This 177-nucleotide RNA was probed chemically with 2A3 and DMS. For DMS, 4,149 sequencing reads were counted. The RNA was probed in 150 mM KOAc, 10 mM MgCl2 and 150 mM bicine (pH 8.5) at 24 C. Source: RMDB library OK2TST, as collected in RNAgym.
[RMDB]
RNA sequence: GGGAACGACUCGAGUAGAGUCGAAAACUCUGGAGUAAGGGCUGGUAUUGGAGGGCUUGCGCCGCUUGCUUCGUGCCUGGUGUGUGGCUGGGCUGAUGCAAGGGCUGGUCCAGCCGAUGCCUGGCAGCACCUCGUUCUCAUUCGUGAGAACGAGGUGAAAAGAAACAACAACAACAAC
Reactivity to 2A3 in 0.01 (KOAc 150mM, MgCl2 10mM, bicine 150mM(pH8.5), 24C), signal-to-noise 3, nucleotides 027 to 126: c020u000c050u080g050g040a050g030u050a040a060g060g010g000c030u020g030g010u080a090u090u140g050g040a040g010g040g000c020u050u060g020c040g030c030c010g120c050u010u050g000c000u040u030c040g080u030g010c000c010u020g010g010u020g010u020g040u080g070g000c010u000g010g000g000c010u050g130a220u130g010c060a090a150g110g150g000c010u020g000g000u000c000c000a000g000c000c000g000a000u020g000c010c000u000g010g000c000a010g020
Reactivity to DMS in 0.01 (KOAc 150mM, MgCl2 10mM, bicine 150mM(pH8.5), 24C), signal-to-noise 2, nucleotides 027 to 126: c030u000c040u000g020g010a070g010u010a070a040g010g000g020c020u000g000g010u000a110u000u000g010g020a140g020g000g030c040u010u000g020c190g020c020c020g020c070u000u000g010c030u000u000c040g010u000g010c000c000u000g000g010u000g020u000g020u020g020g000c010u000g010g010g000c000u000g000a060u000g010c060a120a130g020g020g010c020u000g000g000u000c020c010a030g010c010c000g000a010u000g000c000c000u000g000g010c000a080g000